[RMDB]
Structure probing data (2A3) for a 177-nucleotide construct. The RNA was probed in 150 mM KOAc, 10 mM MgCl2 and 150 mM bicine (pH 8.5) at 24 C. Source: RMDB library OK1LIB, as collected in RNAgym. For 2A3 the reverse transcriptase was SuperScript II with manganese.
RNA sequence: GGGAACGACUCGAGUAGAGUCGAAAAUUCCAGUCGGGUAUAUUUUUGUAAUAACGUCACCACUUCCGGCCACGGCAUACGCGGCUCGUUAUACUUCACCACCCGGCUCAGGUUAGGAAUAUUUAACGUCAUGACUGGAGUUCGCUCCAGUCAUGACAAAAGAAACAACAACAACAAC
Reactivity to 2A3 in 0.01 (KOAc 150mM, MgCl2 10mM, bicine 150mM(pH8.5), 24C), signal-to-noise 1, nucleotides 027 to 126: u020u000c000c000a030g000u000c000g000g060g140u080a170u000a170u080u250u000u120u090g170u080a200a240u000a070a050c000g030u020c050a050c050c010a100c120u170u000c000c040g030g000c000c120a070c060g010g020c070a150u100a250c040g000c020g010g000c000u010c000g020u010u010a020u010a070c060u030u090c000a000c040c020a030c010c000c000g000g000c000u030c070a010g010g050u000u140a130g000g020a030a060u030a100u160u060u020a090a040c080